Chemical mapping of a 207-nucleotide RNA with 2A3 and DMS. DMS adducts were read by reverse transcription with MarathonRT. It was measured as part of the RMDB library ARCHII. The reactions ran in a buffer of 150 mM KOAc, 10 mM MgCl2 and 150 mM bicine (pH 8.5), at 24 C.

[RMDB]
RNA sequence: GGGAACGACUCGAGUAGAGUCGAAAACAUAAGUAAUAGCGUACCUGGCUAUUUAAAUAGCCACGUCAAUCCUGCUGAUGUCUGAUAAGCUGGUGCGGCGACAAUCAUCAGGCUAGCAGCCUAUUGUGUUUACUGGAUAGUCUGCGAAAUUAUUACACAUUAAUUAAACGUUCGCGUUUAAUUAAUGAAAAGAAACAACAACAACAAC
Reactivity to 2A3 in 0.01 (KOAc 150mM, MgCl2 10mM, bicine 150mM(pH8.5), 24C), signal-to-noise 5, nucleotides 027 to 156: c030a050u240a170a070g110u180a190a180u080a210g080c040g040u060a080c020c050u010g000g000c000u020a020u060u250u140a140a300a070u010a010g000c000c000a000c020g000u000c020a000a030u020c000c020u020g000c000u010g000a010u020g020u000c010u010g010a010u010a020a010g000c010u020g010g020u030g020c030g030g000c020g040a020c060a040a120u160c070a000u010c000a010g000g000c000u010a010g000c000a000g000c010c010u020a010u020u100g080u000g070u120u100u070a140c050u050g010g010a010u000a000g000u000c000u010g000c010g010a040a020a010u150u100a080u080u160a060c050a000
Reactivity to DMS in 0.01 (KOAc 150mM, MgCl2 10mM, bicine 150mM(pH8.5), 24C), signal-to-noise 3, nucleotides 027 to 156: c030a100u000a070a100g000u000a050a110u010a100g040c050g020u000a060c040c030u000g020g000c010u000a010u000u000u020a090a110a110u010a040g020c000c000a050c030g020u010c040a120a160u000c020c030u000g000c030u000g020a100u010g020u000c040u000g020a080u000a180a100g020c050u000g020g010u000g030c130g010g040c020g010a050c040a040a080u000c100a120u000c040a020g010g000c020u000a110g020c030a030g010c050c050u010a060u000u000g020u000g010u000u010u000a110c110u000g020g000a090u000a020g000u000c020u000g040c030g020a120a100a080u010u010a050u000u010a080c060a230